Chemical mapping of a 177-nucleotide RNA with DMS and 2A3. The data come from the RNA Mapping Database (RMDB), library VIROID. For DMS, 2,764 sequencing reads were counted. 2A3 adducts were read by reverse transcription with SuperScript II with manganese.
RNA sequence: GGGAACGACUCGAGUAGAGUCGAAAAGGUGCCCUAUUCGGAGCACUGCAGUUCCCGAUAGAAAGGCUAAGAACCUCGCAAUGAGGUAAGGUGGGACUUUUCCUUCGGGAACCAAGCGGUUGGUUCCACCAGAAGGAGAGUUCGCUCUCCUUCUGGUAAAAGAAACAACAACAACAAC
Reactivity to DMS in 0.01 (KOAc 150mM, MgCl2 10mM, bicine 150mM(pH8.5), 24C), signal-to-noise 3, nucleotides 027 to 126: g000g020u000g010c000c010c010u010a130u020u000c110g000g010a070g030c010a030c010u010g010c060a210g000u000u000c000c000c010g010a040u000a050g010a020a010a040g000g020c030u010a150a130g010a170a080c000c000u000c010g000c170a160a130u010g000a020g010g010u000a010a040g010g020u000g020g020g000a080c000u000u000u010u010c000c010u000u000c010g000g000g010a010a000c000c070a070a130g000c060g010g010u010u000g030g010u000u000c000c020
Reactivity to 2A3 in 0.01 (KOAc 150mM, MgCl2 10mM, bicine 150mM(pH8.5), 24C), signal-to-noise 2, nucleotides 027 to 126: g020g050u130g050c020c010c010u070a230u030u200c100g020g000a060g010c010a010c020u010g000c000a010g000u000u000c030c010c000g000a000u010a030g000a010a010a010g020g000c060u060a070a060g060a080a120c000c000u030c020g000c170a210a300u300g000a000g000g030u020a030a030g090g020u150g050g020g070a160c020u020u040u010u050c000c020u030u000c000g010g000g000a000a000c030c000a090a040g030c060g070g000u070u110g090g010u050u040c020c010